RNA sequence: GGGAACGACUCGAGUAGAGUCGAAAACGGAAUACAGUGAGUGGACGGAACAAAUCCCCUUCCCACCUCCCCACUGUCCACUCACUGUCUUCCUAAUAGGAAAUAUAAAUCGGGGGUGGGAAGGGGACACUCCCUGAUAGUUCGCUAUCAGGGAGUGAAAAGAAACAACAACAACAAC
Reactivity to 2A3 in 0.01 (KOAc 150mM, MgCl2 10mM, bicine 150mM(pH8.5), 24C), signal-to-noise 6, nucleotides 027 to 126: c040g010g000a000a010u020a000c010a000g000u000g000a000g000u010g010g010a000c020g020g030a120a010c040a070a100a120u090c000c000c000c000u000u000c000c000c000a000c000c000u040c030c080c030c020a060c020u030g000u000c010c010a000c010u000c010a010c010u000g000u000c010u010u010c000c000u020a050a020u080a050g050g090a030a150a020u300a060u100a050a130a030u290c130g000g000g000g000g000u000g000g010g000a000a000g000g000g000g010a000
Description
An RNA of 177 nucleotides, treated with 2A3 and read out base by base. 2A3 adducts were read by reverse transcription with SuperScript II with manganese.